[RMDB]
RNA sequence: GGGAACGACUCGAGUAGAGUCGAAAAUACCUGAUCCGAUCAAAUUGCUGAUUAGAAUGUCACGUAAUGACUUGAUCAAUUGGGCGCAUGUGGACGAGUAUAGAAUAUCAUUGAUGGAUUCGACGAACUUUUCAUAUUUUUUCGAAAAUAUGAAAAGAAAAGAAACAACAACAACAAC
Reactivity to 2A3 in 0.01 (KOAc 150mM, MgCl2 10mM, bicine 150mM(pH8.5), 24C), signal-to-noise 6, nucleotides 027 to 126: u060a000c000c000u020g010a030u000c030c060g030a020u030c030a020a070a060u130u100g000c020u020g030a070u020u080a110g130a300a120u190g000u020c010a000c100g030u050a050a050u070g070a060c020u040u050g010a040u050c010a040a050u080u070g050g030g000c040g000c030a030u070g040u070g080g030a020c040g030a030g050u050a050u040a140g110a090a060u090a040u140c070a080u020u180g070a050u090g080g050a050u060u040c030g010a030c030g030a090a100
Reactivity to DMS in 0.01 (KOAc 150mM, MgCl2 10mM, bicine 150mM(pH8.5), 24C), signal-to-noise 9, nucleotides 027 to 126: u010a120c010c010u010g010a060u010c060c060g010a040u000c030a040a090a110u000u010g010c080u000g010a040u000u000a110g010a130a080u010g010u000c010a020c140g020u010a060a070u010g010a070c110u000u000g010a040u000c040a090a070u000u000g010g010g020c050g020c080a050u010g010u000g000g010a050c060g010a070g010u000a080u000a080g010a050a070u000a080u010c050a070u000u010g010a090u000g000g000a110u000u000c050g010a080c150g010a080a160